RNA sequence: GGGAACGACUCGAGUAGAGUCGAAAAUUCCAUUUGAGUAUCCUGAAAACGGGCUUUUCAGCAUGGAACGUACAUAUUAAAUAGUAGGAGUGCAUAGUGUCCCGUAUAGCAGGCAUUAACAUUCCUGAAAACGUGAAAAGGUUCGCCUUUUCACGAACUCAUAUGUUCAGUUCGCUGAACAUAUGAGAAAAGAAACAACAACAACAAC
Reactivity to DMS in 0.01 (KOAc 150mM, MgCl2 10mM, bicine 150mM(pH8.5), 24C), signal-to-noise 3, nucleotides 027 to 156: u000u000c000c000a090u000u010u000g010a140g000u000a080u000c020c020u020g010a050a070a120a190c050g040g000g040c080u000u000u000u000c040a070g030c110a060u000g010g010a070a050c080g020u000a110c090a060u000a130u000u010a040a080a170u000a160g010u000a020g020g000a040g040u010g000c030a130u000a030g030u000g010u000c010c010c050g010u010a100u010a120g010c060a050g000g000c040a030u000u000a070a070c050a060u000u000c010c000u010g000a050a060a070a130c010g030u000g000a010a010a010a020g000g000u000u000c300g020c040c010u010u000u010u000c000a010c000g010a030a060
Reactivity to 2A3 in 0.01 (KOAc 150mM, MgCl2 10mM, bicine 150mM(pH8.5), 24C), signal-to-noise 7, nucleotides 027 to 156: u020u000c000c000a010u080u040u040g040a040g020u080a070u130c010c000u040g050a040a040a050a070c110g040g030g040c010u090u070u050u120c070a060g020c030a030u030g030g040a070a020c020g090u120a030c030a040u220a060u140u300a110a140a120u190a050g130u060a010g020g040a020g010u010g010c070a070u050a070g030u020g050u120c000c060c030g060u110a090u140a140g090c070a020g000g000c000a000u010u020a020a010c000a010u020u040c000c000u020g050a080a090a020a030c000g000u000g000a000a000a000a000g010g010u050u040c110g100c010c000u000u000u000u000c000a000c000g000a000a000